[RMDB]
RNA sequence: GGGAACGACUCGAGUAGAGUCGAAAACUACCAGCGAUUUAGGUAGUCUCAUUGAUUGUAAUGCGGCUUCAGUUAACCAAAUUGUCUUGCGUAAUUCUAAUGGUGCUUGCAUUUGGAACGCUGCUGCGACCUAUUAUCAGUUCGCUGAUAAUAGGUCAAAAGAAACAACAACAACAAC
Reactivity to 2A3 in 0.01 (KOAc 150mM, MgCl2 10mM, bicine 150mM(pH8.5), 24C), signal-to-noise 8, nucleotides 027 to 126: c010u010a010c000c010a030g070c080g150a140u070u090u240a090g000g000u010a020g030u000c000u000c010a080u080u100g140a110u080u190g090u220a120a080u170g020c010g000g000c000u040u030c050a100g020u040u060a080a070c000c000a000a010a030u050u060g060u050c010u010u010g010c010g070u070a090a120u130u080c070u160a170a080u170g120g000u100g030c000u000u010g010c000a000u000u000u020g010g000a020a000c010g000c020u020g000c010u010g010c020
Reactivity to DMS in 0.01 (KOAc 150mM, MgCl2 10mM, bicine 150mM(pH8.5), 24C), signal-to-noise 6, nucleotides 027 to 126: c020u000a020c050c000a130g020c200g010a150u010u010u000a090g020g010u000a010g010u000c020u000c030a110u010u000g010a130u000u010g010u000a050a070u000g020c050g010g010c010u000u000c040a070g010u000u000a120a170c020c000a020a020a020u000u000g000u010c010u000u000g010c020g020u010a080a070u000u010c200u020a110a070u000g020g030u010g010c010u000u010g010c010a020u000u000u000g010g000a080a090c070g000c020u000g010c040u010g010c100
Overview: The data come from the RNA Mapping Database (RMDB), library 15KREP. An RNA of 177 nucleotides, treated with 2A3 and DMS and read out base by base. The 2A3 profile rests on 9,982 reads. The DMS profile rests on 11,133 reads. Values cover nucleotides 27 to 126. The RNA was probed in 150 mM KOAc, 10 mM MgCl2 and 150 mM bicine (pH 8.5) at 24 C.